[RMDB]
RNA sequence: GGGAACGACUCGAGUAGAGUCGAAAAGAUAUGGAUAUUGCGAGGUCCACUCGGAAACGAGUGAAGACCGAUGAGCAAGUCCUAAGUCAAACCGGUUUAGCCUGUCUUCGGACAGGCUAAACCGGAAGAUCCCAGUAAUGUUCGCAUUACUGGGAUCAAAAGAAACAACAACAACAAC
Reactivity to DMS in 0.01 (KOAc 150mM, MgCl2 10mM, bicine 150mM(pH8.5), 24C), signal-to-noise 1, nucleotides 027 to 126: g050a040u020a300u000g000g000a000u000a130u010u010g010c040g010a210g010g000u000c000c000a010c020u000c000g020g000a080a060a150c000g020a020g010u000g000a170a120g020a010c010c000g000a070u010g040a300g000c000a020a020g000u050c000c010u000a070a100g010u020c020a070a100a140c030c000g000g000u020u030u010a020g010c060c000u030g000u000c000u000u020c180g030g000a040c000a020g040g020c040u000a000a010a020c040c000g000g000a020a020